[RMDB]
RNA sequence: GGGAACGACUCGAGUAGAGUCGAAAAGCCUGUGGGUUCGCCCACAGGCAAAGAAUGCUGACACGCGCAGCACGCAAUGAAGCGAAAAGCGUGAAAAGAAAAAAAGCGGUUACUUCGGUAACCGCAAGUAUUUAGUUAUGUUCGCAUAACUAAAUACAAAAGAAACAACAACAACAAC
Reactivity to 2A3 in 0.01 (KOAc 150mM, MgCl2 10mM, bicine 150mM(pH8.5), 24C), signal-to-noise 5, nucleotides 027 to 126: g010c010c000u000g010u010g020g010g020u060u140c210g070c040c010c000a000c000a010g020g000c000a000a000a000g010a090a060u140g000c000u010g020a030c000a000c010g000c000g000c000a010g010c030a040c040g000c010a100a300u300g080a270a060g000c010g020a020a000a000a020g000c010g010u020g010a040a020a020a050g090a020a120a010a020a000a010a030g000c000g000g000u000u000a000c010u020u070c190g060g000u000a000a000c000c000g000c000a000a000
Reactivity to DMS in 0.01 (KOAc 150mM, MgCl2 10mM, bicine 150mM(pH8.5), 24C), signal-to-noise 3, nucleotides 027 to 126: g010c000c000u010g040u000g010g000g010u000u020c250g030c000c000c000a000c010a000g000g000c000a000a020a060g010a190a160u000g010c000u000g000a100c010a000c000g020c010g020c020a010g000c010a080c050g000c020a160a050u000g010a190a120g000c020g000a100a020a040a090g010c010g010u000g010a130a090a110a100g010a000a000a090a090a080a120a120g000c000g010g000u000u000a000c000u000u010c140g010g010u000a000a000c000c010g010c000a000a010
Chemical mapping of a 177-nucleotide RNA with 2A3 and DMS. DMS adducts were read by reverse transcription with MarathonRT. For DMS, 2,898 sequencing reads were counted. For 2A3, 7,875 sequencing reads were counted.